[RMDB]
RNA sequence: GGGAACGACUCGAGUAGAGUCGAAAAGCACCAAGGUGAUGGAACAUGGCUCUGGUGUCGUUGGGCUGGGCUGUUAGCUGCAAUAAGUGGCCUGCCCACUCCAAGUUGAGAGUUGGGCCAUGGGGCUUUAGCGAAGGCUCUAGCUUCCUGGUUCCUACAAUAGCACACGGUUCGCCGUGUGCUAUUGAAAAGAAACAACAACAACAAC
Reactivity to 2A3 in 0.01 (KOAc 150mM, MgCl2 10mM, bicine 150mM(pH8.5), 24C), signal-to-noise 1, nucleotides 027 to 156: g040c160a030c000c000a070a010g040g050u100g040a090u090g050g060a190a080c010a070u000g080g000c000u010c000u000g000g000u090g010u090c080g040u080u000g000g010g010c010u030g000g020g000c000u060g070u270u160a000g000c000u010g020c010a090a300u110a300a000g020u070g030g050c010c000u030g020c000c010c010a000c000u000c000c000a040a060g040u110u300g160a230g000a010g010u120u080g000g010g000c000c000a000u070g000g000g010g030c010u000u060u080a040g010c030g070a130a020g060g040c000u000c000u000a000g010c000u040u060c010c000u010g050g000u090u080c000c000u000a020

The data come from the RNA Mapping Database (RMDB), library ARCHII. Chemical mapping of a 207-nucleotide RNA with 2A3. Reactivities are rounded to 0.1 and cut off at 0 and 3. The reactions ran in a buffer of 150 mM KOAc, 10 mM MgCl2 and 150 mM bicine (pH 8.5), at 24 C. The 2A3 profile rests on 807 reads.